[RMDB]
RNA sequence: GGGAACGACUCGAGUAGAGUCGAAAAUGCACUUGUCUGGUGGGAUUGUGGCAUUAAUUUGCCUGCUCAUCUAGGCAGUGGACAUAUGCUCAACACUGGGUAUAAUUCUAAUUGAAUACUAUUUUUCGGGGAUAGAGCUUCGGCUCUAUCAAAAGAAACAACAACAACAAC
Reactivity to 2A3 in 0.01 (KOAc 150mM, MgCl2 10mM, bicine 150mM(pH8.5), 24C), signal-to-noise 9, nucleotides 027 to 129: u120g000c000a010c040u150u090g000u000c000u000g000g000u000g000g010g040a060u150u240g100u080g120g000c010a000u020u070a070a070u060u080u000g000c000c000u000g000c000u000c020a050u000c030u030a000g000g000c010a000g010u000g000g010a000c010a010u080a010u050g010c000u010c030a060a170c120a090c260u080g020g000g030u040a020u060a070a120u110u030c070u100a080a190u140u120g070a050a040u110a210c110u090a260u160u120u020u020u100c050g040g000g040
Reactivity to DMS in 0.01 (KOAc 150mM, MgCl2 10mM, bicine 150mM(pH8.5), 24C), signal-to-noise 5, nucleotides 027 to 129: u030g030c020a000c050u060u020g050u000c030u060g030g040u040g010g030g040a050u040u030g000u000g050g060c010a020u010u020a020a040u050u020u040g040c000c030u000g020c020u010c010a020u060c030u040a040g060g000c020a040g030u030g040g020a120c140a100u050a000u030g030c010u020c020a050a130c190a160c220u040g010g000g000u000a000u030a040a060u000u000c000u050a060a140u050u000g040a060a020u000a000c130u060a080u040u020u000u010u020c070g030g030g040